[RMDB]
RNA sequence: GGGAACGACUCGAGUAGAGUCGAAAAUCAUUGAAGGCCCAAUAGCUGAAAUAGCACUACUCUUAACAGCUGACUUUAUUUGUUUAUCUGUUAUUCCCAUUGUUUUACCAACUUUGCAAGAUUUUAUACCUACCUAUGCAUUCGUGCAUAGGUAGGUAAAAGAAACAACAACAACAAC
Reactivity to 2A3 in 0.01 (KOAc 150mM, MgCl2 10mM, bicine 150mM(pH8.5), 24C), signal-to-noise 4, nucleotides 027 to 126: u090c000a000u020u110g070a040a020g080g020c000c020c030a030a060u140a030g020c020u050g030a250a000a000u100a020g030c040a010c120u110a000c020u060c010u110u040a050a020c000a050g000c010u050g010a010c000u010u190u200a150u160u210u070g110u030u070u080a120u060c020u020g010u040u030a070u110u010c000c000c000a020u000u070g150u040u130u040u050a080c090c080a140a110c090u110u070u140g050c050a050a050g020a170u080u090u040u100a100u000
Reactivity to DMS in 0.01 (KOAc 150mM, MgCl2 10mM, bicine 150mM(pH8.5), 24C), signal-to-noise 1, nucleotides 027 to 126: u070c010a040u020u000g000a110a140g070g000c000c000c000a250a050u080a170g030c000u000g020a120a100a030u030a110g030c140a070c050u030a080c100u000c040u000u000a030a020c000a010g000c130u000g000a080c020u000u000u050a030u120u000u000g000u050u050u030a020u020c000u000g010u010u000a050u000u000c000c000c000a210u070u010g000u000u020u000u000a030c130c120a110a050c230u000u000u150g020c030a060a020g040a140u060u070u000u000a050u000

Structure probing data (2A3 and DMS) for a 177-nucleotide construct. The RNA was probed in 150 mM KOAc, 10 mM MgCl2 and 150 mM bicine (pH 8.5) at 24 C. DMS adducts were read by reverse transcription with MarathonRT. It was measured as part of the RMDB library OK1LIB.